[RMDB]
This 207-nucleotide RNA was probed chemically with 2A3 and DMS. For DMS the reverse transcriptase was MarathonRT. The 2A3 profile rests on 1,887 reads. Conditions: 150 mM KOAc, 10 mM MgCl2 and 150 mM bicine (pH 8.5), 24 C. 2A3 adducts were read by reverse transcription with SuperScript II with manganese.

RNA sequence: GGGAACGACUCGAGUAGAGUCGAAAACGCACUAAGCUUGCCAUCAAUAUGGGUGCCAUGGAGGAGUCCGUGGCAUUCAGGUUGGCUAAGGAGGGAUGAACCGGGCCAGGGGUGAAAACCAGCAGCCAAGAGUUCCCGUGGUAGGCAGUAGUGGGAUUGUUAACUCUGUGUUCGCACAGAGUUAACAAAAAGAAACAACAACAACAAC
Reactivity to 2A3 in 0.01 (KOAc 150mM, MgCl2 10mM, bicine 150mM(pH8.5), 24C), signal-to-noise 2, nucleotides 027 to 156: c070g040c000a010c010u030a040a040g010c000u020u020g000c000c000a030u010c020a060a080u070a060u070g000g010g010u000g000c000c000a020u040g040g000a050g130g040a090g300u040c000c000g000u000g020g000c000a000u000u000c000a000g000g030u000u020g030g000c010u020a050a040g100g030a050g010g000g030a050u080g040a050a040c020c000g020g010g000c000c030a070g080g010g010g000u020g050a020a020a020a070c000c000a000g060c020a000g000c020c020a120a050g000a020g040u030u030c030c000c000g000u010g000g020u020a010g050g000c030a040g080u030a000g000u040g010g020g090a080u020
Reactivity to DMS in 0.01 (KOAc 150mM, MgCl2 10mM, bicine 150mM(pH8.5), 24C), signal-to-noise 1, nucleotides 027 to 156: c020g030c020a070c000u010a060a140g020c000u000u010g050c020c040a050u000c040a030a110u000a060u000g010g000g020u000g000c010c020a020u010g000g000a030g050g010a250g010u000c010c020g130u010g000g010c000a020u000u000c000a030g040g040u010u000g020g000c060u020a100a090g040g000a130g010g050g000a100u010g020a100a130c000c010g000g040g000c000c040a170g000g040g040g000u010g020a150a090a160a070c010c010a080g070c060a200g010c010c020a030a090g000a300g000u000u000c000c000c010g040u020g030g020u000a040g000g000c000a150g000u000a050g020u010g000g010g070a170u000